Chemical mapping of a 177-nucleotide RNA with DMS and 2A3.
The reactions ran in a buffer of 150 mM KOAc, 10 mM MgCl2 and 150 mM bicine (pH 8.5), at 24 C.
2A3 adducts were read by reverse transcription with SuperScript II with manganese.
The 2A3 profile rests on 937 reads.
The data come from the RNA Mapping Database (RMDB), library RFM100.
The DMS profile rests on 651 reads.
[RMDB]
RNA sequence: GGGAACGACUCGAGUAGAGUCGAAAAUUCCGCGGACAACUGGCGGUGCGCAGCCACCUGCUCAUGUGCGGGCAUUGCCGGCGCUUCAUCCGCCAGAUGCGCCUGACCCAGGCGACCGUGCGCCAUCGCGCAAGACCGAGUUCGCUCGGUCUUGCGCAAAAGAAACAACAACAACAAC
Reactivity to DMS in 0.01 (KOAc 150mM, MgCl2 10mM, bicine 150mM(pH8.5), 24C), signal-to-noise 1, nucleotides 027 to 126: u000u080c120c000g010c000g030g010a210c000a040a140c000u000g000g000c000g000g000u000g080c220g000c000a200g030c120c300a010c110c070u000g000c000u000c150a150u060g100u000g000c210g000g000g000c300a070u040u020g000c170c000g000g000c000g030c080u000u030c120a000u000c000c030g030c000c000a000g040a010u120g000c070g190c000c000u000g000a300c000c000c010a220g010g000c000g000a280c000c120g010u000g010c000g060c180c080a180u040c210
Reactivity to 2A3 in 0.01 (KOAc 150mM, MgCl2 10mM, bicine 150mM(pH8.5), 24C), signal-to-noise 2, nucleotides 027 to 126: u080u010c000c010g030c000g060g000a110c000a130a030c060u000g000g030c010g000g100u040g000c000g000c020a010g010c030c010a000c000c000u000g010c000u020c080a290u200g060u200g120c020g000g000g030c040a130u060u140g040c080c050g070g010c000g000c000u100u060c030a110u020c000c000g000c000c000a020g000a020u080g000c060g000c010c020u060g050a170c030c000c000a020g000g000c000g000a000c040c000g040u000g000c030g030c010c020a230u170c060